Structure probing data (DMS and 2A3) for a 207-nucleotide construct.
RNA sequence: GGGAACGACUCGAGUAGAGUCGAAAAUUUUUGGGUAGGAAGAUGUCAUGAUGUUAAGGGUCUCAUUUGAGGAUCUCUGGCAUAGAGAAUGGUGUUUACAGAGGCUGGAGGCCCCUCAGGAGGCAUCCUAAGCUCUUGAUGGGGAGUUCCAGAGCAAAUCCAGUUUUAAUUUCGAUUAAAACUGGAUAAAAGAAACAACAACAACAAC
Reactivity to DMS in 0.01 (KOAc 150mM, MgCl2 10mM, bicine 150mM(pH8.5), 24C), signal-to-noise 1, nucleotides 027 to 156: u000u000u000u000u000g000g020g030u020a090g010g000a070a090g000a050u010g020u020c010a120u030g020a110u000g000u010u000a110a090g020g020g010u010c020u000c060a190u010u000u010g020a130g020g040a130u000c000u000c010u000g000g070c070a090u000a100g010a050g020a070a090u010g020g010u010g010u000u000u000a110c090a120g010a120g010g020c030u000g010g010a070g030g010c030c000c020c050u010c050a040g000g050a030g010g060c030a040u030c070c060u010a160a250g000c020u010c020u000u010g000a070u010g000g000g030g000a100g000u000u000c010c020a110g000a100g020c070a060a080
Reactivity to 2A3 in 0.01 (KOAc 150mM, MgCl2 10mM, bicine 150mM(pH8.5), 24C), signal-to-noise 1, nucleotides 027 to 156: u160u160u050u040u060g050g000g000u040a090g020g020a020a040g010a050u050g010u050c040a070u120g050a020u060g030u150u090a080a060g050g020g050u020c010u010c060a090u050u040u150g090a080g020g020a050u050c040u000c010u040g050g000c030a050u060a090g090a000g040a110a060u060g030g020u040g010u020u080u050a040c050a000g080a040g100g020c010u000g000g000a010g060g020c010c000c010c020u010c010a000g000g010a010g010g010c000a010u030c000c050u080a070a080g010c000u000c010u010u020g010a060u160g020g010g000g000a010g020u070u000c040c050a010g020a000g010c010a000a140

Background: The data come from the RNA Mapping Database (RMDB), library OK3TST. For DMS the reverse transcriptase was MarathonRT. For 2A3, 993 sequencing reads were counted.